An RNA of 170 nucleotides, treated with 2A3 and DMS and read out base by base. It was measured as part of the RMDB library 15KLIB. The RNA was probed in 150 mM KOAc, 10 mM MgCl2 and 150 mM bicine (pH 8.5) at 24 C.
[RMDB]
RNA sequence: GGGAACGACUCGAGUAGAGUCGAAAAGCCGGUUCGGUAGUUGUGAGUAUGCACAAGAGGGUGUUUGUAUUACCACAAAUGGCUCGUGGGCCAUUUUUAAUGACCACCAUCUUAAUAGACCUGGUGUAAGCCGUUGUCUUCGGACAACGGAAAAGAAACAACAACAACAAC
Reactivity to 2A3 in 0.01 (KOAc 150mM, MgCl2 10mM, bicine 150mM(pH8.5), 24C), signal-to-noise 3, nucleotides 027 to 129: g030c000c000g030g000u050u040c050g070g080u050a100g000u090u170g000u000g040a070g030u070a040u160g110c010a040c010a040a000g020a000g040g000g000u000g050u070u010u050g030u060a050u000u040a130c030c000a040c010a070a030a030u080g000g000c010u010c050g120u230g110g000g010c020c040a070u050u000u000u040u060a070a090u090g090a000c000c000a000c000c000a020u000c060u040u230a150a170u000a050g030a010c000c000u000g010g070u000g050u040a000a110g030
Reactivity to DMS in 0.01 (KOAc 150mM, MgCl2 10mM, bicine 150mM(pH8.5), 24C), signal-to-noise 4, nucleotides 027 to 129: g020c050c010g000g040u020u020c060g030g060u020a060g030u010u040g040u020g000a000g030u030a070u030g040c080a100c190a060a030g010a080g020g010g020u000g010u070u000u040g030u040a060u030u050a060c240c160a120c230a000a000a000u070g010g000c020u010c110g040u090g080g050g040c030c040a020u000u020u030u040u130a100a090u000g010a070c090c020a040c020c010a000u030c010u020u040a110a120u020a100g020a000c050c090u070g020g030u030g020u060a030a080g010